Background:
An RNA of 177 nucleotides, treated with DMS and 2A3 and read out base by base. Values cover nucleotides 27 to 126. For DMS, 6,467 sequencing reads were counted. Values are in units of 0.01, from 0 to 300, in steps of 10. For 2A3 the reverse transcriptase was SuperScript II with manganese.

RNA sequence: GGGAACGACUCGAGUAGAGUCGAAAAAGCACAUGGCUGUCGAGCUGUGUGGGAAUUAUCUAAGGAAAAUACGUUACGGCGGGCGGCCAAAACACCUGUGUCAAUGCCGGCAGAUCGGGCGUUGCGCCACGCGCUAGUAUUUCGAUACUAGCGCGUGAAAAGAAACAACAACAACAAC
Reactivity to DMS in 0.01 (KOAc 150mM, MgCl2 10mM, bicine 150mM(pH8.5), 24C), signal-to-noise 3, nucleotides 027 to 126: a100g030c040a020c060a040u020g010g000c000u000g010u040c190g000a040g000c000u000g010u010g010u000g000g000g000a090a030u010u010a040u010c060u020a100a120g000g000a040a050a060a070u030a070c050g000u010u030a070c080g020g040c110g000g000g000c020g000g010c010c040a040a100a090a050c130a050c080c050u000g020u000g000u010c050a090a060u010g020c060c000g000g020c090a120g020a080u020c080g010g000g000c010g000u000u000g030c050g020c100
Reactivity to 2A3 in 0.01 (KOAc 150mM, MgCl2 10mM, bicine 150mM(pH8.5), 24C), signal-to-noise 7, nucleotides 027 to 126: a000g090c030a020c010a030u020g020g000c020u040g090u300c170g160a020g000c000u000g000u000g020u050g040g030g070a030a070u120u040a080u140c070u120a050a080g150g030a050a110a030a050u220a050c050g030u110u030a030c010g020g010c010g020g010g000c010g010g030c020c000a040a010a050a020c080a040c030c030u090g000u010g070u150c010a010a040u090g030c000c000g060g020c080a060g040a180u130c060g020g010g000c010g010u020u020g030c010g030c010